RNA sequence: GGGAACGACUCGAGUAGAGUCGAAAAAGGUUACCCGCGACAGGACGGAAAGACCCCGUGGAGCUUUACUGCAGCCUGAUAUUGAAUGUUGGUGCGACAUGUACAGCAUAGGUGGGAGACUGAGAAGGAAAGUCAUACAUUUCGAUGUAUGACUUUCAAAAGAAACAACAACAACAAC
Reactivity to 2A3 in 0.01 (KOAc 150mM, MgCl2 10mM, bicine 150mM(pH8.5), 24C), signal-to-noise 4, nucleotides 027 to 126: a000g090g000u050u050a150c020c000c000g010c000g030a030c040a070g060g020a020c010g020g060a140a150a030g100a080c020c030c020c000g030u080g060g040a070g010c010u090u050u100a080c020u030g020c020a020g020c020c000u010g040a040u030a080u130u260g190a170a100u120g020u080u040g060g000u130g040c000g030a010c040a060u170g020u040a020c030a020g040c010a030u040a090g100g000u070g010g040g000a050g000a010c010u040g010a020g070a180a020g150
Reactivity to DMS in 0.01 (KOAc 150mM, MgCl2 10mM, bicine 150mM(pH8.5), 24C), signal-to-noise 8, nucleotides 027 to 126: a060g010g010u010u010a140c050c010c020g020c080g010a130c090a070g010g010a090c050g010g000a070a070a100g000a120c070c040c040c070g020u010g010g010a110g020c020u000u000u000a060c050u000g010c200a100g000c030c010u000g010a080u010a060u000u010g000a100a090u000g020u010u010g000g000u010g010c030g010a090c070a030u010g020u010a040c070a040g010c040a060u000a080g000g010u010g010g000g010a290g000a080c060u000g010a110g000a090a130g000